About this RNA: This 177-nucleotide RNA was probed chemically with DMS and 2A3. For DMS, 8,453 sequencing reads were counted.
RNA sequence: GGGAACGACUCGAGUAGAGUCGAAAAGUGGCUGACGGGAGGCGGAGCAGCGAACGAGGGCGUCGGCCAUUUUGUGCCUGUUUCCUGUGGGAUUAGGCACAAGUAGAACUUCGGUUCUACUUGUGCCCUUCAGAAAACAGUUCGCUGUUUUCUGAAGAAAAGAAACAACAACAACAAC
Reactivity to DMS in 0.01 (KOAc 150mM, MgCl2 10mM, bicine 150mM(pH8.5), 24C), signal-to-noise 4, nucleotides 027 to 126: g030u000g000g010c010u000g000a020c030g010g010g020a160g010g000c050g010g000a100g020c090a090g020c080g000a080a070c070g000a080g010g000g010c020g000u000c040g000g010c000c010a020u000u000u000u000g010u000g010c010c010u000g010u000u000u000c020c010u000g020u000g010g010g010a190u010u000a080g010g010c000a000c000a010a000g000u010a010g000a020a010c010u000u010c200g020g000u000u000c000u000a000c000u000u000g010u000g010c010c000
Reactivity to 2A3 in 0.01 (KOAc 150mM, MgCl2 10mM, bicine 150mM(pH8.5), 24C), signal-to-noise 3, nucleotides 027 to 126: g020u010g000g000c020u010g000a020c000g060g050g070a090g120g030c070g070g030a130g030c130a010g050c040g030a080a030c060g030a120g000g070g040c020g020u030c020g010g010c010c000a010u040u050u020u030g040u030g030c000c000u020g060u040u050u040c020c020u080g030u140g090g050g030a100u100u220a070g000g010c000a000c000a020a000g000u010a000g000a010a000c000u030u050c240g060g000u000u010c000u000a000c020u000u000g000u000g010c010c000
The RNA was probed in 150 mM KOAc, 10 mM MgCl2 and 150 mM bicine (pH 8.5) at 24 C.